[RMDB]
RNA sequence: GGGAACGACUCGAGUAGAGUCGAAAAUGGAGAGGUCAUUGACUUGACAUGUCCGACACACACGUCGUGAUGUCUGAUGUCAGUUAGUGUCCCAAUACGUCUCUCUGUCCUACUAGAGUGGGACGUAUCGUAUGUGGUCGUUCGCGACCACAUACGAAAAAGAAACAACAACAACAAC
Reactivity to 2A3 in 0.01 (KOAc 150mM, MgCl2 10mM, bicine 150mM(pH8.5), 24C), signal-to-noise 6, nucleotides 027 to 126: u190g060g010a090g020a030g020g000u020c020a000u010u000g000a010c020u170u160g000a000c020a020u160g090u000c030c010g000a000c010a000c010a010c000a020c060g300u300c130g010u080g060a300u030g010u000c020u060g000a000u000g000u000c000a000g000u000u000a000g000u000g000u030c010c000c000a020a010u080a040c050g040u010c000u010c000u000c020u040g100u060c030c010u060a130c020u070a060g050a030g250u030g000g040g000a000c000g010u030a070
Reactivity to DMS in 0.01 (KOAc 150mM, MgCl2 10mM, bicine 150mM(pH8.5), 24C), signal-to-noise 2, nucleotides 027 to 126: u000g000g020a090g000a000g060g010u010c010a010u000u030g010a030c000u010u060g000a040c010a020u000g000u030c030c100g000a000c000a040c000a000c030a190c300g000u050c140g020u000g000a060u000g020u000c000u000g000a050u000g050u000c000a000g000u000u000a000g000u000g010u000c000c010c000a050a010u030a010c090g000u010c000u000c000u000c010u020g000u030c020c050u030a150c070u050a090g000a130g010u000g020g010g000a000c000g030u020a030

Chemical mapping of a 177-nucleotide RNA with 2A3 and DMS. DMS (dimethyl sulfate) methylates the pairing face of unpaired adenines and cytosines. Conditions: 150 mM KOAc, 10 mM MgCl2 and 150 mM bicine (pH 8.5), 24 C. It was measured as part of the RMDB library OK1LIB.